[RMDB]
An RNA of 207 nucleotides, treated with DMS and 2A3 and read out base by base. Conditions: 150 mM KOAc, 10 mM MgCl2 and 150 mM bicine (pH 8.5), 24 C. Reactivities are given for positions 27 through 156. For 2A3 the reverse transcriptase was SuperScript II with manganese. DMS (dimethyl sulfate) methylates the pairing face of unpaired adenines and cytosines.

RNA sequence: GGGAACGACUCGAGUAGAGUCGAAAACUAAAGCACUUGCCGAGUACGCAAGGCAAGGCGUGUCGGUCGUCAUCGUGAGUCCAUGGUGCCCCCAAGACAAAGGGCGCGCUGAGCGGGCAAUGCAAGCCGCAUCACUCGCAGCCAACGCCCGCAAGGGGUGAAUAUACAGUUUCGACUGUAUAUUCACAAAAGAAACAACAACAACAAC
Reactivity to DMS in 0.01 (KOAc 150mM, MgCl2 10mM, bicine 150mM(pH8.5), 24C), signal-to-noise 2, nucleotides 027 to 156: c010u000a070a100a200g040c020a050c020u000u000g000c000c000g010a300g010u020a100c220g020c150a100a200g010g020c000a010a040g020g020c070g010u000g020u000c020g000g000u000c030g010u000c020a090u000c060g050u000g000a160g020u000c050c040a090u020g020g020u000g000c000c000c010c020c050a120a210g020a150c090a070a130a170g000g000g040c000g010c010g000c070u000g010a180g030c000g000g010g020c020a050a060u000g010c060a120a120g000c250c130g000c030a050u000c040a020c000u000c000g030c000a250g010c040c020a060a060c040g010c010c000c010g000c110a040a060g010g020g000
Reactivity to 2A3 in 0.01 (KOAc 150mM, MgCl2 10mM, bicine 150mM(pH8.5), 24C), signal-to-noise 3, nucleotides 027 to 156: c040u090a070a080a020g040c020a030c210u000u010g000c000c000g040a050g120u170a070c130g030c140a070a000g010g000c000a010a020g010g000c040g010u080g060u040c060g010g020u030c020g050u030c020a070u020c080g030u010g110a050g070u030c090c030a050u130g020g000u060g030c040c000c000c000c010a080a050g060a050c070a050a070a050g010g000g000c010g000c010g000c030u020g010a020g030c010g030g010g000c030a070a010u060g000c060a110a080g110c080c060g000c040a010u070c020a020c020u040c000g000c010a000g010c010c010a010a030c040g000c000c000c010g020c050a030a030g060g000g000